[RMDB]
An RNA of 177 nucleotides, treated with DMS and 2A3 and read out base by base. Source: RMDB library RFMREP, as collected in RNAgym.
RNA sequence: GGGAACGACUCGAGUAGAGUCGAAAAGGCGAGGAGUAUACGCCGCGUCAGGGACUAUAUGCUAACUUAAGUUCUAGGGAGACGGAAUUUCGUUACGUCGCUCAUUUAUCAAUAUUAUCAUCCUCACGAGUUCAUAGUACUUCGGUACUAUGAACUCAAAAGAAACAACAACAACAAC
Reactivity to DMS in 0.01 (KOAc 150mM, MgCl2 10mM, bicine 150mM(pH8.5), 24C), signal-to-noise 2, nucleotides 027 to 126: g010g000c030g010a080g010g030a120g000u000a100u010a080c160g020c000c030g000c040g000u010c020a110g010g000g020a030c040u000a070u010a030u000g000c070u000a060a110c110u000u000a040a050g010u000u000c020u010a130g020g000g010a060g000a050c020g010g000a080a100u000u010u010c190g030u000u000a070c020g010u000c020g000c030u000c030a120u000u000u000a130u000c070a070a090u000a100u000u000a070u000c090a060u000c020c000u020c120a100c300
Reactivity to 2A3 in 0.01 (KOAc 150mM, MgCl2 10mM, bicine 150mM(pH8.5), 24C), signal-to-noise 2, nucleotides 027 to 126: g050g020c010g000a000g060g030a050g070u150a020u010a210c030g000c030c000g000c000g070u040c010a030g040g030g020a010c030u030a000u020a030u300g040c040u050a060a110c030u070u110a040a040g020u040u010c020u080a080g000g000g000a030g000a020c000g000g080a070a050u160u170u140c070g080u010u070a040c020g030u000c010g010c000u050c030a050u040u090u060a130u140c020a070a040u060a060u130u180a120u120c040a030u030c000c040u060c000a040c020
For 2A3 the reverse transcriptase was SuperScript II with manganese. Reactivities are given for positions 27 through 126. The RNA was probed in 150 mM KOAc, 10 mM MgCl2 and 150 mM bicine (pH 8.5) at 24 C. High 2A3 reactivity points to a flexible backbone, as in loops and unpaired stretches. Values are in units of 0.01, from 0 to 300, in steps of 10.